[RMDB]
Record summary: The record gives the reactivity of an RNA of 177 nucleotides to DMS. The DMS profile rests on 738 reads.
RNA sequence: GGGAACGACUCGAGUAGAGUCGAAAAAGCAUCAAAGGAAAAUUCCGAGUCUGAGUCCGAACCCUGCGGUUGCUGGGAUUCUGAAGAAAAGCUCGCAGGUGCGGCGCCGACGGAGCCGAGCAUGAGCUGAGGUAACUCAUUUCGAUGAGUUACCUCAAAAAGAAACAACAACAACAAC
Reactivity to DMS in 0.01 (KOAc 150mM, MgCl2 10mM, bicine 150mM(pH8.5), 24C), signal-to-noise 1, nucleotides 027 to 126: a120g020c050a020u010c080a080a130a200g030g000a110a090a150a130u000u000c070c030g000a140g000u000c050u000g000a050g010u000c030c030g000a050a050c080c020c040u000g010c090g020g010u010u000g020c010u030g030g020g010a140u010u010c070u000g000a120a080g020a070a140a150a090g010c040u000c000g030c070a070g010g010u010g000c030g000g000c050g020c070c130g030a030c120g000g000a050g020c020c020g030a080g000c120a070u010g000a060g020c120

DMS adducts were read by reverse transcription with MarathonRT.
The reactions ran in a buffer of 150 mM KOAc, 10 mM MgCl2 and 150 mM bicine (pH 8.5), at 24 C.